[RMDB]
RNA sequence: GGGAACGACUCGAGUAGAGUCGAAAAGGCGGUUCGCCGCCAUGAGCACCUUUGUGUGUAGCAGUAUAGGCAAGUCGACCGGUCCCAUUGGGACCGAAGUCGAUGAUGACCCUAUACGGGAGCUACACACUCUGGUCCAAAAGGCUUUCGAGCCUAACAACUUCGUUUUCUUCGGAAAACGAAGUUGAAAAGAAACAACAACAACAAC
Reactivity to 2A3 in 0.01 (KOAc 150mM, MgCl2 10mM, bicine 150mM(pH8.5), 24C), signal-to-noise 2, nucleotides 027 to 156: g020g000c030g010g030u040u110c170g070c150c010g000c000c000a050u120g120a040g030c140a000c020c000u000u010u010g010u020g000u000g000u000a000g010c000a000g020u000a000u010a000g000g010c020a080a120g000u000c000g010a000c000c000g000g000u020c010c000c030a190u300u300g010g000g000a000c000c050g030a090a020g000u010c030g000a030u000g000a010u040g010a010c020c000c000u000a000u000a010c010g000g020g000a090g030c000u010a010c000a000c000a000c000u000c000u020g000g010u060c010c000a050a130a110a020g010g020c000u180u180u110c290g070a020g000c000c010u050a030a030